[RMDB]
RNA sequence: GGGAACGACUCGAGUAGAGUCGAAAACAAUAAUAACAACCAGAACAACAAUAACGGCGGCGGUGCUGGUGAUGACGACGAUGGUGGGUCAUCGAGGGAUUGCUACUGGAUCAACAAUGGAGGAUCGGCUACGAUAAAGAUUCGUCUUUAUCGUAGCAAAAGAAACAACAACAACAAC
Reactivity to DMS in 0.01 (KOAc 150mM, MgCl2 10mM, bicine 150mM(pH8.5), 24C), signal-to-noise 5, nucleotides 027 to 126: c060a090a090u010a080a090u010a080a090c100a070a080c030c040a070g010a050a060c050a050a060c060a120a090u020a080a100c090g010g010c050g010g000c050g010g010u000g020c020u000g010g010u010g010a040u000g010a060c040g010a050c070g020a070u010g010g020u000g000g000g000u000c020a040u010c030g020a190g010g000g000a050u010u000g010c040u010a090c070u000g000g000a070u010c030a030a070c110a070a090u010g010g010a090g000g000a060u000c080g010
Reactivity to 2A3 in 0.01 (KOAc 150mM, MgCl2 10mM, bicine 150mM(pH8.5), 24C), signal-to-noise 4, nucleotides 027 to 126: c010a010a110u210a160a050u100a120a040c040a020a030c020c020a020g080a060a030c040a030a000c000a010a170u130a180a030c040g060g000c010g040g000c040g050g020u050g070c020u040g000g070u070g020a040u050g040a020c070g010a010c030g050a060u120g060g110u080g030g060g030u030c000a010u030c020g020a050g030g010g020a050u040u070g020c000u030a070c030u040g030g010a040u060c010a010a060c020a060a080u130g080g000a050g020g020a060u060c040g070